[RMDB]
RNA sequence: GGGAACGACUCGAGUAGAGUCGAAAAACAUCUCAUAAAGGAGAUGAAAGUUUGAUUUGCAAGCCAACCUAAAUAUAUGGGCUAACCAAUCUCUGACAGAAUAUCCUUACUCUUUUGUGAAUUGUAAAAUAUAACUUCCUUUCGAGGAAGUUAUAUUAAAAGAAACAACAACAACAAC
Reactivity to 2A3 in 0.01 (KOAc 150mM, MgCl2 10mM, bicine 150mM(pH8.5), 24C), signal-to-noise 3, nucleotides 027 to 126: a000c020a010u030c010u010c050a000u130a090a100a000g100g000a000g010a020u080g030a140a040a030g000u060u080u130g030a010u030u000u080g000c020a060a020g020c000c030a000a060c020c030u090a100a210a040u190a020u010a050u150g040g000g000c000u000a010a010c030c020a020a010u030c060u010c030u060g060a020c000a040g130a090a030u060a050u060c010c000u020u030a070c000u020c010u010u040u020u050g060u000g000a080a100u140u080g030u120a110a210
Reactivity to DMS in 0.01 (KOAc 150mM, MgCl2 10mM, bicine 150mM(pH8.5), 24C), signal-to-noise 4, nucleotides 027 to 126: a130c020a010u010c040u000c000a070u010a030a070a120g000g000a020g020a060u000g000a070a100a130g010u000u000u000g000a090u000u000u000g010c070a140a080g010c020c040a080a090c090c080u000a040a080a080u000a090u010a090u000g000g000g010c040u000a060a100c220c040a030a030u000c030u000c070u000g000a070c080a060g000a080a060u010a080u000c050c040u010u010a060c030u000c030u000u000u000u000g020u000g000a040a100u000u000g000u000a040a040